This 177-nucleotide RNA was probed chemically with DMS and 2A3. Conditions: 150 mM KOAc, 10 mM MgCl2 and 150 mM bicine (pH 8.5), 24 C. The 2A3 profile rests on 1,693 reads.
[RMDB]
RNA sequence: GGGAACGACUCGAGUAGAGUCGAAAAACCUACAUACAUUGUAUGUAGACCCUAAGUAUCAAGUCAUUGUCUUAAAAGACAAUGUACUUUCUUCUAUGCUUAGAUUGCACACCGUUGAGUCAGGUGAGUGAUCUAACUGGUUCGCCAGUUAGAUCACAAAAGAAACAACAACAACAAC
Reactivity to DMS in 0.01 (KOAc 150mM, MgCl2 10mM, bicine 150mM(pH8.5), 24C), signal-to-noise 2, nucleotides 027 to 126: a130c300c000u010a000c000a000u000a000c010a190u030u000g010u000a000u000g000u000a020g000a090c060c010c000u000a010a030g030u000a030u010c220a020a040g020u000c010a000u000u000g030u000c000u000u000a100a120a130a110g000a000c000a000a000u000g020u030a010c000u000u000u000c120u030u000c230u000a040u000g040c050u000u000a010g000a150u000u030g000c100a080c010a030c030c060g010u000u000g030a170g050u000c020a130g020g030u000g000a080
Reactivity to 2A3 in 0.01 (KOAc 150mM, MgCl2 10mM, bicine 150mM(pH8.5), 24C), signal-to-noise 2, nucleotides 027 to 126: a000c000c000u010a000c010a000u010a000c030a110u150u300g000u010a010u020g020u000a020g060a030c000c010c010u000a030a020g000u010a010u150c060a010a010g000u010c000a010u010u000g010u030c010u030u200a160a080a020a000g010a000c010a000a010u000g000u010a000c000u050u020u020c080u080u000c010u040a000u050g000c000u000u030a050g030a080u100u210g030c060a010c000a010c060c020g050u090u060g070a130g280u090c040a040g020g020u010g020a030